An RNA of 177 nucleotides, treated with 2A3 and DMS and read out base by base. It was measured as part of the RMDB library OK2TST. DMS adducts were read by reverse transcription with MarathonRT. Values cover nucleotides 27 to 126. Conditions: 150 mM KOAc, 10 mM MgCl2 and 150 mM bicine (pH 8.5), 24 C. For 2A3 the reverse transcriptase was SuperScript II with manganese.
RNA sequence: GGGAACGACUCGAGUAGAGUCGAAAACUUCGCAUUUGAAACCUUUACGAUGUCAUUUUAUUGCCUAUUUCCUUUUUAGGUAUUUUCGGUGAAAUGGCUGCAUGUUGAAAAUUGCAUCGCUGAAAAAAACUUAUUUUUCAUUCGUGAAAAAUAAGUUAAAAGAAACAACAACAACAAC
Reactivity to 2A3 in 0.01 (KOAc 150mM, MgCl2 10mM, bicine 150mM(pH8.5), 24C), signal-to-noise 3, nucleotides 027 to 126: c030u160u120c060g000c030a070u040u020u130g070a070a070a060c010c010u110u180u130a090c120g020a040u070g030u030c000a000u020u020u030u110a140u080u120g000c000c010u000a020u050u040u100c040c000u160u120u010u070u300a040g030g000u010a050u030u050u010u050c040g010g000u050g020a040a000a000u030g010g000c010u010g040c010a030u100g050u070u040g080a050a050a030a030u050u070g000c000a020u050c050g040c100u090g150a040a030a000a000a190
Reactivity to DMS in 0.01 (KOAc 150mM, MgCl2 10mM, bicine 150mM(pH8.5), 24C), signal-to-noise 4, nucleotides 027 to 126: c090u000u010c100g020c070a070u000u000u010g010a170a060a070c040c180u000u000u010a090c090g000a080u000g010u000c040a020u000u000u000u000a020u020u010g010c120c030u000a040u010u000u000c030c020u000u000u010u000u010a020g010g010u010a040u010u000u000u010c060g000g020u000g010a010a010a020u000g000g010c060u000g010c070a050u000g010u010u010g000a110a040a040a060u000u000g030c020a070u000c100g010c130u010g000a000a000a080a100a080